[RMDB]
RNA sequence: GGGAACGACUCGAGUAGAGUCGAAAACCCCUUCAGUUCGCUGAAGGGGAAAGGGUUGUCCCGCCCGCCGUGAACCCAGGCUAAAAGUUAAGGUAGGUGGGCAAACCCUACUCUUCGGAGUAGGGAACAUGGAACAAUUCUUCGGAAUUGUUCCAUGAAAAGAAACAACAACAACAAC
Reactivity to 2A3 in 0.01 (KOAc 150mM, MgCl2 10mM, bicine 150mM(pH8.5), 24C), signal-to-noise 1, nucleotides 027 to 126: c000c000c000c000u010u020c000a090g000u040u160c170g000c100u010g000a000a000g000g000g000g000a030a060a010g030g010g010u070u050g030u060c000c000c000g000c000c000c000g000c000c000g070u060g120a050a050c000c000c020a040g080g000c000u030a090a160a100a100g060u090u060a120a020g030g000u030a030g000g000u040g000g000g000c010a020a010a080c000c000c000u000a000c000u000c000u020u020c250g100g000a010g000u000a000g010g000g000a010a000
Reactivity to DMS in 0.01 (KOAc 150mM, MgCl2 10mM, bicine 150mM(pH8.5), 24C), signal-to-noise 2, nucleotides 027 to 126: c010c000c000c010u000u000c000a000g030u000u010c170g020c010u000g000a000a020g010g010g000g000a010a030a080g010g000g000u010u010g020u010c000c000c010g000c010c000c000g030c020c000g000u010g000a070a070c040c000c020a260g020g010c040u010a040a050a130a100g020u000u020a100a110g010g020u000a110g030g020u000g000g000g000c050a010a060a130c000c000c000u010a040c010u000c000u000u000c140g020g000a020g010u000a000g000g000g000a040a060